[RMDB]
RNA sequence: GGGAACGACUCGAGUAGAGUCGAAAACAAAAUGAUCGGGGCUCAAGUUCGCCACCGAGACCUAACGGCACGGGUAACACCGUGAUCCAGUAGGUUGGCAUUCUGUUCGGGUGGAAGCUCGGGUGAGCACGGUGGGAAUAUUCGUAUUCCCACCGUGAAAAGAAACAACAACAACAAC
Reactivity to 2A3 in 0.01 (KOAc 150mM, MgCl2 10mM, bicine 150mM(pH8.5), 24C), signal-to-noise 5, nucleotides 027 to 126: c020a000a040a030a070u180g040a060u070c020g010g000g050g000c010u030c100a040a120g060u160u110c070g030c020c040a080c020c010g020a020g000a000c000c000u050a070a010c010g000g000c000a000c000g000g030g000u000a010a000c030a010c050c000g010u000g010a030u070c000c000a050g070u010a000g040g000u000u040g040g010c040a070u120u040c050u110g100u060u050c020g050g020g020u060g040g060a040a030g010c000u000c010g030g040g020u080g030a030g020
Reactivity to DMS in 0.01 (KOAc 150mM, MgCl2 10mM, bicine 150mM(pH8.5), 24C), signal-to-noise 3, nucleotides 027 to 126: c070a070a020a070a040u000g000a160u000c020g000g010g020g000c020u010c070a100a080g020u030u010c150g010c010c050a110c030c000g000a080g020a030c000c000u000a040a050c030g000g010c010a000c000g010g000g000u010a110a160c170a190c000c000g020u000g010a060u050c010c000a160g020u000a030g000g000u000u010g020g000c070a050u010u030c080u010g010u060u000c090g010g020g010u000g000g040a080a070g000c050u020c070g000g000g010u000g020a110g010

Notes
Source: RMDB libraries RFM100 and RFMREP, as collected in RNAgym. This 177-nucleotide RNA was probed chemically with 2A3 and DMS. The RNA was probed in 150 mM KOAc, 10 mM MgCl2 and 150 mM bicine (pH 8.5) at 24 C. DMS adducts were read by reverse transcription with MarathonRT.